[RMDB]
RNA sequence: GGGAACGACUCGAGUAGAGUCGAAAAGGCCGGAGGGUUUGCCAAGGCAGACAUUGAGAUGGCUGGACCCAUGGCUGCAGUAGGCUUGCUAAUUGUCAGCUAUGUGGUCUCGGGAAAGAGUGUGGACCAGUGACCGUGACUUCGGUCACGGUCACUGAAAAGAAACAACAACAACAAC
Reactivity to DMS in 0.01 (KOAc 150mM, MgCl2 10mM, bicine 150mM(pH8.5), 24C), signal-to-noise 1, nucleotides 027 to 126: g000g050c040c010g000g010a170g000g000g010u000u000u000g030c040c070a110a190g030g010c020a040g010a030c050a100u020u000g000a170g000a110u000g010g060c030u000g000g000a030c010c000c000a010u000g000g010c000u020g000c000a050g020u000a160g010g010c170u010u020g020c010u000a060a030u000u000g000u010c000a010g000c000u000a030u000g020u010g040g000u000c000u000c120g020g000g000a250a090a060g000a060g030u000g000u000g010g000a090c170
Chemical mapping of a 177-nucleotide RNA with DMS. It was measured as part of the RMDB library OK2TRN. The reactions ran in a buffer of 150 mM KOAc, 10 mM MgCl2 and 150 mM bicine (pH 8.5), at 24 C. Reactivities are rounded to 0.1 and cut off at 0 and 3.